[RMDB]
RNA sequence: GGGAACGACUCGAGUAGAGUCGAAAAAUGGGCAAUCCUUUUAUUGAUAUAUGCAUCAGGUGGACGGCUGAGUUCCGCGGUCAUAACAAAAUCGUUCACAUCGAGAUCUGGAGCGGUUAUAUGAGUAUAUGCUUCAGCCAGUACCCUUCCAAAUUCCGAGUAGCUGUUGUUUCGACAACAGCUACUCAAAAGAAACAACAACAACAAC
Reactivity to 2A3 in 0.01 (KOAc 150mM, MgCl2 10mM, bicine 150mM(pH8.5), 24C), signal-to-noise 1, nucleotides 027 to 156: a000u060g000g000g000c100a060a120u100c030c050u000u060u130u110a060u050u090g050a050u070a010u030a020u240g050c040a080u060c050a030g030g110u040g020g040a060c060g010g000c010u010g000a020g040u160u030c010c040g030c020g030g020u050c010a030u010a080a060c090a040a130a000a010u050c020g000u010u030c030a040c040a240u110c040g070a050g000a180u040c010u050g010g000a000g000c000g000g100u080u060a150u000a050u060g000a000g060u130a040u030a000u170g000c040u000u000c000a000g000c000c000a010g010u090a070c000c000c000u030u020c040c020a020a100a110u090u040c140c030
Overview: An RNA of 207 nucleotides, treated with 2A3 and read out base by base. For 2A3, 421 sequencing reads were counted. Values cover nucleotides 27 to 156. 2A3 adducts were read by reverse transcription with SuperScript II with manganese.